About this RNA
This 177-nucleotide RNA was probed chemically with 2A3 and DMS. For DMS, 2,973 sequencing reads were counted.
RNA sequence: GGGAACGACUCGAGUAGAGUCGAAAAAGAAUCUCCGUGGGACUGGCCCGACAUUCACAUUUUAAACAAGAUUCUUCUAGGGGAUUUCUAGGCUCUGCAAAUUGGGGAAGAACAGCUCUGGGAGAGCGAAUAAUUUUGUCUUCGGACAAAAUUAUUCAAAAGAAACAACAACAACAAC
Reactivity to 2A3 in 0.01 (KOAc 150mM, MgCl2 10mM, bicine 150mM(pH8.5), 24C), signal-to-noise 5, nucleotides 027 to 126: a000g050a050a070u010c010u010c040c010g030u060g010g040g020a050c020u030g050g010c000c020c020g050a040c030a060u130u160c040a040c020a090u080u140u120u270a140a170a050c060a080a040g070a130u100u000c000u040u020c020u090a030g030g020g000g040a100u020u110u010c020u030a030g070g060c010u020c020u050g040c070a040a070a200u160u130g010g010g010g020a070a040g020a050a030c020a040g010c000u010c020u030g030g030g020a070g010a020g040c030
Reactivity to DMS in 0.01 (KOAc 150mM, MgCl2 10mM, bicine 150mM(pH8.5), 24C), signal-to-noise 3, nucleotides 027 to 126: a100g000a100a080u000c010u000c030c100g030u010g010g010g010a090c080u000g000g000c020c020c040g010a080c100a040u000u030c050a080c090a060u010u010u020u020a090a130a100c120a120a100g000a110u020u000c020u010u000c050u010a060g030g010g000g000a080u020u020u020c040u000a090g000g000c020u020c040u000g010c130a040a060a130u030u040g000g000g000g000a100a090g000a040a090c140a090g020c030u000c030u010g010g010g040a090g000a020g010c050
Source: RMDB library OK1LIB, as collected in RNAgym.